The record gives the reactivity of an RNA of 207 nucleotides to 2A3 and DMS. 2A3 adducts were read by reverse transcription with SuperScript II with manganese. The 2A3 profile rests on 1,717 reads. DMS adducts were read by reverse transcription with MarathonRT. It was measured as part of the RMDB library RNAMAK. The DMS profile rests on 2,080 reads. The RNA was probed in 150 mM KOAc, 10 mM MgCl2 and 150 mM bicine (pH 8.5) at 24 C.
[RMDB]
RNA sequence: GGGAACGACUCGAGUAGAGUCGAAAAGACCUCCUUCGGGAGGUCAAAAAGAUAUGGAGCGUUAGAGGAGCGAAGAACGUAUGGAGGCUCGGAAACGAGUGAAGUACGGGAGCUCCGAUUGACGCUCCUAAGUCAAAAACGUAGAUUCGUCUACGAAUCUCUACUAGGGAUUCGUCCCUAGUAGAGAAAAAGAAACAACAACAACAAC
Reactivity to 2A3 in 0.01 (KOAc 150mM, MgCl2 10mM, bicine 150mM(pH8.5), 24C), signal-to-noise 2, nucleotides 027 to 156: g010a010c000c000u010c000c020u010u110c160g060g000g000a000g010g000u000c000a000a010a020a000a020g000a000u010a000u090g000g000a000g000c020g010u040u100a030g040a080g050g000a000g000c020g050a070a060g020a050a000c000g010u010a000u030g030g020a050g160g140c010u000c000g020g000a110a070a030c000g000a000g040u210g040a040a000g010u000a000c010g000g000g000a020g000c020u070c000c000g000a000u000u000g000a000c000g000c000u000c000c000u000a000a010g010u010c000a000a000a080a040a060c040g020u010a010g020a020u040u080c230g080u000c140u000a000c020g010a060a120
Reactivity to DMS in 0.01 (KOAc 150mM, MgCl2 10mM, bicine 150mM(pH8.5), 24C), signal-to-noise 1, nucleotides 027 to 156: g000a020c000c000u000c010c000u000u000c300g100g000g000a000g040g040u000c010a000a000a030a090a130g000a100u000a290u000g010g000a060g040c040g010u000u010a040g040a300g010g000a070g010c000g000a080a170g010a090a140c000g010u000a030u000g000g020a300g030g040c000u000c000g000g020a110a150a290c010g000a010g050u000g000a230a300g000u000a010c070g010g000g000a260g000c010u020c000c000g000a040u000u010g000a060c130g010c000u020c000c010u000a020a090g000u000c070a000a070a050a120a150c030g000u010a030g000a150u000u020c260g000u000c040u010a030c020g010a110a180